[RMDB]
RNA sequence: GGGAACGACUCGAGUAGAGUCGAAAAGUAAUGGUCUUGUACUAAGCUGCUCGGACAAUGAAGCCCUUCCGAAAGGAGAAGUUUGAACCGUGAGGGGAAAGCAACUGCUAUUAGUGUCAUAUAGUAGCAGCGCUUUAAAAUUCGUUUUAAAGCGCUGAAAAGAAACAACAACAACAAC
Reactivity to 2A3 in 0.01 (KOAc 150mM, MgCl2 10mM, bicine 150mM(pH8.5), 24C), signal-to-noise 6, nucleotides 027 to 126: g100u120a030a120u120g050g020u040c020u080u100g030u080a060c010u050a050a050g020c040u030g000c010u030c050g040g010a020c040a040a060u110g030a050a020g020c000c000c000u020u020c010c010g060a100a050a030g060g030a070g020a120a030g040u040u100u090g060a030a010c010c030g010u040g040a060g000g030g010g020a020a040a000g030c020a050a040c010u010g020c000u020a030u050u080a110g070u040g060u090c050a030u050a010u000a160g060u010a010g030
Reactivity to DMS in 0.01 (KOAc 150mM, MgCl2 10mM, bicine 150mM(pH8.5), 24C), signal-to-noise 6, nucleotides 027 to 126: g010u030a060a090u010g000g010u010c020u010u010g020u020a070c110u020a090a130g010c020u010g000c030u010c060g010g010a050c100a070a060u010g000a110a120g010c030c030c020u020u010c010c020g020a080a060a100g000g000a040g000a070a090g010u010u000u000g010a300a170c050c010g010u030g000a140g010g010g000g010a070a040a060g000c050a070a150c030u010g000c010u000a020u000u000a070g040u020g000u030c070a080u010a060u010a020g010u000a030g000
This 177-nucleotide RNA was probed chemically with 2A3 and DMS. Reactivities are given for positions 27 through 126. DMS adducts were read by reverse transcription with MarathonRT. High DMS reactivity at an A or C suggests that its Watson-Crick edge is free.